An RNA of 207 nucleotides, treated with 2A3 and DMS and read out base by base. For 2A3, 3,335 sequencing reads were counted. The reactions ran in a buffer of 150 mM KOAc, 10 mM MgCl2 and 150 mM bicine (pH 8.5), at 24 C. For DMS the reverse transcriptase was MarathonRT.
RNA sequence: GGGAACGACUCGAGUAGAGUCGAAAACUAUUGUCCGCUUGAGGGGAGCAAAGCAGUAUGUCAAGAGAAUUCCAGUCCAGUCAGUAUUUAUGGUACUAUUUUCAUUUGUAGACUUGGCAUUCAUGAUUUGAACCAGAUGCUUUUUGAGUUCUCCCGAGUAUGAUAAAUCCUUCGGGAUUUAUCAUACAAAAGAAACAACAACAACAAC
Reactivity to 2A3 in 0.01 (KOAc 150mM, MgCl2 10mM, bicine 150mM(pH8.5), 24C), signal-to-noise 5, nucleotides 027 to 156: c020u030a070u170u110g030u050c030c040g040c110u100u090g050a180g000g030g000g010a000g000c020a020a020a010g000c000a010g020u190a030u080g010u060c020a020a000g060a000g030a150a020u060u000c040c010a010g030u000c020c010a040g040u070c040a000g030u060a070u070u160u070a120u220g060g020u030a050c030u050a130u070u140u070u110c090a100u040u110u260g080u110a030g000a020c000u060u100g010g000c010a000u020u040c010a030u070g160a130u070u060u110g040a040a030c050c010a010g020a110u010g000c000u060u070u040u070u160g110a090g010u070u010c010u010c000c000c000g010a020
Reactivity to DMS in 0.01 (KOAc 150mM, MgCl2 10mM, bicine 150mM(pH8.5), 24C), signal-to-noise 2, nucleotides 027 to 156: c030u010a070u010u000g000u000c050c140g020c050u010u000g000a180g000g010g030g020a070g010c050a070a060a080g020c020a060g010u000a160u000g020u000c000a040a060g000a190g000a070a080u000u000c030c030a100g000u010c010c030a150g020u000c100a080g000u000a010u000u000u020a070u010g010g020u000a040c010u000a150u010u010u010u000c080a220u000u010u000g030u010a120g010a070c020u010u000g080g020c050a000u000u000c020a030u010g010a160u000u000u010g000a080a100c060c020a070g010a130u000g000c010u000u000u000u000u020g020a180g000u000u000c010u000c000c010c020g010a270